[RMDB]
RNA sequence: GGGAACGACUCGAGUAGAGUCGAAAAGGUCUAACCUUCGGGUUAGACCAAAAUAAGAGCAAACCGUAGCUCAGCUGCAAACGCAAAAAGCAGCAAAGCGAAAAACCCGCCAGUUCGCUGGCGGGAAUCACUAUCAGAACUUCGGUUCUGAUAGUGAAAAAGAAACAACAACAACAAC
Reactivity to 2A3 in 0.01 (KOAc 150mM, MgCl2 10mM, bicine 150mM(pH8.5), 24C), signal-to-noise 1, nucleotides 027 to 126: g010g000u030c000u000a000a000c000c020u000u040c250g010g010g000u000u000a000g010a000c010c000a010a000a000a000u000a000a000g010a020g080c030a180a000a040c070c000g070u020a040g030c000u020c070a070g010c010u020g040c060a150a070a120c160g030c100a070a150a020a060a060g000c010a000g000c020a030a070a000g030c020g080a070a000a050a100a100c010c020c000g020c000c010a010g010u060u110c200g020c140u010g000g000c000g000g010g000a000a000
Reactivity to DMS in 0.01 (KOAc 150mM, MgCl2 10mM, bicine 150mM(pH8.5), 24C), signal-to-noise 1, nucleotides 027 to 126: g000g000u000c000u000a010a000c030c000u000u000c170g030g000g000u000u000a000g020a000c000c000a000a000a040a100u000a090a070g000a080g020c030a130a060a110c080c060g010u000a030g000c030u000c000a190g030c000u000g060c000a080a080a020c150g000c150a170a060a010a110a070g000c040a000g020c000a040a080a070g000c080g000a030a080a070a090a110c000c000c000g030c010c000a000g000u000u000c200g020c020u000g010g000c020g020g020g000a000a020